This 177-nucleotide RNA was probed chemically with DMS and 2A3. The reactions ran in a buffer of 150 mM KOAc, 10 mM MgCl2 and 150 mM bicine (pH 8.5), at 24 C. Source: RMDB library OK1LIB, as collected in RNAgym. The 2A3 profile rests on 1,185 reads. 2A3 is a SHAPE reagent: it acylates the 2'-hydroxyl of flexible nucleotides of all four kinds. For DMS, 1,860 sequencing reads were counted. For DMS the reverse transcriptase was MarathonRT.
[RMDB]
RNA sequence: GGGAACGACUCGAGUAGAGUCGAAAACGUUGCUUCCAGCUCCGGGGCCUACGGGGCGCGGCCCGACCCAGAAACUACUAUGGGCCGUGGAACCCCUGGAUGGGUGCGGCCCCCUACACCCGUCGUGAGUUUAGCUUCUCUUCGGAGAAGCUAAACUAAAAGAAACAACAACAACAAC
Reactivity to DMS in 0.01 (KOAc 150mM, MgCl2 10mM, bicine 150mM(pH8.5), 24C), signal-to-noise 1, nucleotides 027 to 126: c110g020u000u000g000c020u010u010c060c070a120g000c020u000c020c000g040g020g010g000c030c000u080a080c170g000g030g020g000c040g020c020g000g030c000c000c010g020a160c040c010c140a110g000a210a090a060c250u090a050c090u010a140u040g000g000g050c000c000g000u000g000g000a130a130c060c000c000c000u000g000g000a040u010g000g000g000u000g000c180g000g000c070c000c020c010c000u030a150c120a050c000c030c000g010u000c050g000u060g000
Reactivity to 2A3 in 0.01 (KOAc 150mM, MgCl2 10mM, bicine 150mM(pH8.5), 24C), signal-to-noise 2, nucleotides 027 to 126: c040g020u010u050g030c010u110u020c040c030a030g040c040u020c030c020g000g010g000g020c000c000u030a020c020g000g020g000g040c060g020c000g000g020c000c000c000g100a110c010c010c030a000g060a060a180a010c160u230a000c020u040a200u260g010g010g000c000c010g010u000g000g030a110a120c000c000c010c000u040g060g050a030u040g030g000g030u030g040c060g000g050c000c000c000c010c000u000a010c010a030c010c000c000g000u080c060g050u070g090